The record gives the reactivity of an RNA of 207 nucleotides to DMS and 2A3.
RNA sequence: GGGAACGACUCGAGUAGAGUCGAAAAAUACACCAGCAGUAGGACUCAGCGACCGUCACCACAAGGUUGUGCUGGUAUCCGACGGUCGUAUAGCCCUGUCUUGCAGGUUGCCUUGCACUGACGUGCCACACCAUUUACAGAUUCGUCUGUAAAUGAACAGAACACAACAGUUCGCUGUUGUGUUCUGAAAAGAAACAACAACAACAAC
Reactivity to DMS in 0.01 (KOAc 150mM, MgCl2 10mM, bicine 150mM(pH8.5), 24C), signal-to-noise 2, nucleotides 027 to 156: a120u000a130c050a180c040c000a060g030c010a080g000u000a030g040g020a060c010u000c110a240g000c000g010a020c000c000g020u000c020a150c040c040a060c080a080a120g000g010u000u000g040u000g030c040u000g030g000u000a040u000c080c010g000a040c010g030g000u010c030g040u000a050u010a040g020c020c000c010u000g010u010c040u010u000g040c040a060g030g010u010u000g000c020c120u010u000g040c040a060c050u020g030a070c130g030u000g020c020c040a110c030a190c120c000a080u000u000u030a010c000a020g010a090u000u000c300g060u000c000u020g000u020a000a000a010u000g010a100a120
Reactivity to 2A3 in 0.01 (KOAc 150mM, MgCl2 10mM, bicine 150mM(pH8.5), 24C), signal-to-noise 4, nucleotides 027 to 156: a000u160a000c100a000c000c010a000g010c020a010g020u080a010g010g000a010c000u020c090a010g010c000g000a000c010c000g010u000c000a020c060c010a040c030a100a110g170g060u120u090g090u120g090c120u020g060g020u030a090u070c090c060g000a000c000g000g000u000c010g020u060a050u070a050g000c000c010c010u040g060u110c060u060u180g000c010a030g000g000u040u070g050c010c000u030u100g020c010a040c040u210g080a070c140g010u030g010c050c010a100c010a010c040c000a020u000u000u010a000c000a000g000a010u010u110c150g080u010c110u000g000u000a000a000a000u000g000a030a000

For 2A3 the reverse transcriptase was SuperScript II with manganese. For DMS, 4,147 sequencing reads were counted.